[RMDB]
An RNA of 207 nucleotides, treated with 2A3 and read out base by base. Reactivities are rounded to 0.1 and cut off at 0 and 3. For 2A3, 941 sequencing reads were counted. Values cover nucleotides 27 to 156.
RNA sequence: GGGAACGACUCGAGUAGAGUCGAAAACAAAAACGAAGAAAACACAAACGAAGUUCCAACAUUUAUGUUAAAUGCUGGACAAGCAAAUUACGCUUUCGCUUAAUUUGACUUAAAUACAAAUAUACGUUUGGCAAUUUUUAAUAGUCUUGGAAUCUGUCUUUUUAGAUAUCUUCGGAUAUCUAAAAAGAAAAGAAACAACAACAACAAC
Reactivity to 2A3 in 0.01 (KOAc 150mM, MgCl2 10mM, bicine 150mM(pH8.5), 24C), signal-to-noise 2, nucleotides 027 to 156: c020a030a090a000a030a030c110g120a130a140g060a040a030a010a010c130a030c000a000a030a000c050g020a120a040g070u080u000c000c020a020a010c010a020u030u030u060a100u230g080u040u090a030a040a000u000g020c020u010g000g000a010c010a010a020g000c000a010a010a010u000u010a050c020g030c000u060u210u230c040g040c000u000u110a000a030u050u010u030g100a200c010u060u130a000a050a080u090a060c010a010a120a000u140a050u050a060c000g020u020u020u000g010g000c000a050a070u000u020u020u160u190a230a260u060a080g070u000c020u020u040g060g010a090a080u000c010u010g000u000